[RMDB]
RNA sequence: GGGAACGACUCGAGUAGAGUCGAAAAGGUAUGAUUAGGGUGAGACCUAGGAACCGUAGGGGUAUUCUCAAAGGAAGCUUUUGCAGUGACGCCCAUGUAAGUGGGAUAUAAAAACAGAACUCGUAUGUGUGGCACAGAGAGUUCGCUCUCUGUGCAAUACCUAAAUAGCCUUCGGGCUAUUUAGGUAAAAAGAAACAACAACAACAAC
Reactivity to DMS in 0.01 (KOAc 150mM, MgCl2 10mM, bicine 150mM(pH8.5), 24C), signal-to-noise 1, nucleotides 027 to 156: g010g010u010a030u020g010a160u000u000a110g000g010g020u000g000a190g010a070c040c030u010a050g040g020a110a050c020c030g120u000a100g010g040g000g050u000a150u000u000c040u010c040a090a100a130g040g040a070a140g000c000u000u000u010u000g010c050a110g050u020g000a090c050g010c010c010c010a040u010g000u000a070a100g010u000g000g030g000a050u000a120u020a040a050a070a070a150c070a130g030a050a050c040u000c040g020u000a120u000g020u020g000u000g030g000c040a020c010a020g050a030g010a020g010u000u010c300g040c020u000c000u000c000u000g050u000g010c000a000a010
Reactivity to 2A3 in 0.01 (KOAc 150mM, MgCl2 10mM, bicine 150mM(pH8.5), 24C), signal-to-noise 2, nucleotides 027 to 156: g000g040u090a040u170g040a130u090u080a090g030g020g010u040g050a100g030a100c030c050u030a060g010g040a070a090c050c020g080u090a040g020g020g010g010u060a070u130u020c080u060c050a080a090a030g040g020a060a000g060c000u000u110u050u180g000c040a050g010u000g010a010c110g000c000c010c020a040u040g020u130a070a100g030u000g020g010g040a010u080a000u030a100a040a010a020a010c040a010g060a070a020c020u060c180g030u050a090u140g050u000g040u080g070g060c000a000c000a000g000a000g010a000g000u030u070c030g020c000u030c010u000c000u000g000u000g000c010a000a000